RNA sequence: GGGAACGACUCGAGUAGAGUCGAAAACUUCUGCGGCGACCUCGGCUUGCACCAUUUCGUGUGUCCAUAUUCGUUUUGGGGCCUUCACGGCUUCCACGCGGGGUAUGGCGCUCAGCUGCUCGUACGAGCAUGGCUGGCUCUUCGGAGCCAGCCAUGCAAAAGAAACAACAACAACAAC
Reactivity to 2A3 in 0.01 (KOAc 150mM, MgCl2 10mM, bicine 150mM(pH8.5), 24C), signal-to-noise 2, nucleotides 027 to 126: c050u050u020c000u030g000c060g050g030c080g040a080c000c000u050c000g010g000c000u000u110g000c000a030c020c000a060u130u250u230c130g000u050g000u000g020u000c000c010a030u030a010u130u000c040g020u030u090u140u150g000g000g000g010c000c000u260u280c050a090c180g010g030c040u300u090c000c000a010c000g020c000g000g010g100g000u000a000u000g000g000c040g000c040u010c060a000g020c040u080g030c010u000c000g030u130a090c120g090a090